RNA sequence: GGGAACGACUCGAGUAGAGUCGAAAAUUGCAAGGAGACGUAGAAAAUAAAGUAGGAGCAAAUGGAUUUUCUGCUUGGCGGUAUAGCACGUUUGAGUUUUUCAGUCGUGUCUAUGUUCAGGUUUAUGCUCUUACUAGUACUUCGGUACUAGUAAGAGAAAAGAAACAACAACAACAAC
Reactivity to 2A3 in 0.01 (KOAc 150mM, MgCl2 10mM, bicine 150mM(pH8.5), 24C), signal-to-noise 4, nucleotides 027 to 126: u060u030g010c010a020a030g040g010a070g030a020c030g030u040a040g050a080a100a020a040u140a050a100a040g040u060a040g030g040a040g020c010a010a040a140u070g050g030a020u030u040u010u060c010u020g010c010u010u040g020g000c020g010g040u120a010u020a030g010c000a000c000g000u030u010u020g020a040g020u190u140u030u230u010c000a000g010u010c000g010u010g010u000c000u020a010u030g030u050u050c020a020g010g060u010u100u060a080u170g020
Reactivity to DMS in 0.01 (KOAc 150mM, MgCl2 10mM, bicine 150mM(pH8.5), 24C), signal-to-noise 4, nucleotides 027 to 126: u000u010g010c050a090a090g020g010a080g010a080c070g010u000a060g000a090a060a060a060u010a050a060a060g020u010a050g000g010a050g020c060a060a090a080u000g010g010a110u000u000u000u000c030u000g010c020u000u000g010g020c060g020g010u000a030u000a010g000c000a000c010g010u000u000u000g010a040g020u010u000u000u010u000c010a010g010u000c000g010u000g000u010c010u000a010u000g000u010u000c060a080g010g010u000u000u000a080u030g010
Background:
The record gives the reactivity of an RNA of 177 nucleotides to 2A3 and DMS. For DMS the reverse transcriptase was MarathonRT. It was measured as part of the RMDB library RFMREP. The RNA was probed in 150 mM KOAc, 10 mM MgCl2 and 150 mM bicine (pH 8.5) at 24 C. As a SHAPE reagent, 2A3 marks flexible, mostly unpaired nucleotides at the ribose 2'-OH.